[RMDB]
RNA sequence: GGGAACGACUCGAGUAGAGUCGAAAAGCCUGCAUUCCGGGGAUUAUUGCCCAGACUUACUUCUUUGGCUAUGGCAGCCUAAUCCAGGUUGCACUGGCUAUCAUUACCGCCGUGCUGGCCGAAGGCGACUAUGUAGCGAUUUCGAUCGCUACAUAGUAAAAGAAACAACAACAACAAC
Reactivity to DMS in 0.01 (KOAc 150mM, MgCl2 10mM, bicine 150mM(pH8.5), 24C), signal-to-noise 7, nucleotides 027 to 126: g020c010c000u000g010c090a150u000u000c080c040g020g010g010g010a090u010u000a080u010u000g010c030c010c080a130g010a110c160u010u010a070c140u000u010c070u010u010u000g010g010c030u000a050u010g010g020c040a040g000c060c050u010a070a080u020c160c110a090g010g010u000u000g010c010a090c070u010g010g010c020u000a070u000c150a090u010u000a120c130c090g000c020c020g010u000g000c040u000g000g020c020c020g010a070a100g000g000c130g010
Reactivity to 2A3 in 0.01 (KOAc 150mM, MgCl2 10mM, bicine 150mM(pH8.5), 24C), signal-to-noise 5, nucleotides 027 to 126: g020c010c010u010g080c050a090u140u030c060c030g100g000g030g030a030u070u090a080u120u250g050c020c010c010a010g060a050c040u120u140a050c010u120u170c020u130u120u100g020g000c010u040a090u130g070g000c010a010g030c000c010u030a040a030u110c090c030a010g000g000u000u010g000c020a040c050u030g000g000c010u010a050u080c040a060u030u200a070c030c030g040c010c000g030u040g010c060u050g040g010c010c000g040a030a010g050g010c030g000